[RMDB]
RNA sequence: GGGAACGACUCGAGUAGAGUCGAAAAAUGAAUGAAUGAAUGAAUGAAUGAAUUUUUUUUAGAAGAAGGUGAAACAGGAUUAAAAUAUGGGGACUAAUAUGCUAAGGUUCUAGUAUGGUAAGCUAGCAUAUGGUAUGUUAGCUACAUGUACAUAUCACUACGGUAUACUGUUCGCAGUAUACCGUAGAAAAGAAACAACAACAACAAC
Reactivity to 2A3 in 0.01 (KOAc 150mM, MgCl2 10mM, bicine 150mM(pH8.5), 24C), signal-to-noise 2, nucleotides 027 to 156: a000u060g030a030a010u040g010a030a030u030g020a050a000u030g010a030a040u030g010a020a040u030g030a060a050u050u050u020u030u060u050u150u140a010g010a040a000g020a000a000g010g010u060g020a000a030a070c050a020g040g000a040u120u240a080a050a110a000u210a040u120g000g020g020g000a000c010u070a060a080u060a040u120g020c020u080a050a000g010g000u010u030c000u020a010g030u070a010u030g000g020u030a090a000g020c010u000a000g000c010a010u030a010u120g170g030u140a010u020g020u010u000a000g010c000u010a010c010a010u070g010u030a000c020a040u100a020u190c080a010
Reactivity to DMS in 0.01 (KOAc 150mM, MgCl2 10mM, bicine 150mM(pH8.5), 24C), signal-to-noise 1, nucleotides 027 to 156: a100u000g030a110a090u000g020a130a080u010g000a090a090u010g010a100a100u010g000a140a090u010g000a040a000u000u000u000u000u000u000u000u000a120g020a060a070g010a040a050g020g010u000g010a090a100a040c050a090g010g010a190u000u000a060a050a050a060u000a060u000g030g020g000g020a080c030u010a060a100u000a020u010g000c030u000a070a100g000g020u000u000c060u010a060g030u000a030u000g000g020u000a080a080g000c010u000a030g000c050a010u000a090u000g030g030u000a020u010g010u000u010a020g000c010u000a000c050a050u010g020u000a040c020a110u000a060u000c050a220
Chemical mapping of a 207-nucleotide RNA with 2A3 and DMS. The reactions ran in a buffer of 150 mM KOAc, 10 mM MgCl2 and 150 mM bicine (pH 8.5), at 24 C. DMS adducts were read by reverse transcription with MarathonRT.